[RMDB]
RNA sequence: GGGAACGACUCGAGUAGAGUCGAAAAGUCUUCUGCUUCGGCAGAAGACAAAAUAAAAAGGGGGGCGCAUCACCGCUAUGAUGCGAAGUACAAAAGUACAAAAAAGCUUCGAGUUCGCUCGAAGCAAGACGAAAAGAAUGUUCGCAUUCUUUUCGUCAAAAGAAACAACAACAACAAC
Reactivity to DMS in 0.01 (KOAc 150mM, MgCl2 10mM, bicine 150mM(pH8.5), 24C), signal-to-noise 2, nucleotides 027 to 126: g000u000c000u010u000c000u010g000c000u000u010c230g030g000c010a000g000a020a000g000a000c010a020a030a020a050u010a030a040a090a100a120g010g020g000g010g010g010c010g020c000a000u000c000a080c230c300g000c120u000a110u010g000a000u000g000c000g000a090a120g000u000a000c000a060a090a080a180g000u000a000c010a000a030a110a070a110a150g010c010u000u000c000g010a000g010u010u000c300g000c000u000c000g010a000a000g010c010a010a010
Reactivity to 2A3 in 0.01 (KOAc 150mM, MgCl2 10mM, bicine 150mM(pH8.5), 24C), signal-to-noise 2, nucleotides 027 to 126: g010u000c000u000u000c000u000g000c000u030u050c170g110g000c000a000g010a000a000g000a000c000a000a000a010a000u020a000a040a000a010a010g000g010g010g000g000g000c010g040c010a010u000c000a010c030c050g060c120u060a080u130g000a000u000g000c000g010a050a010g010u010a000c020a030a300a050a030g010u010a030c000a010a130a010a020a000a030g010c000u000u000c000g000a000g040u070u040c170g030c100u010c000g000a000a000g000c000a000a000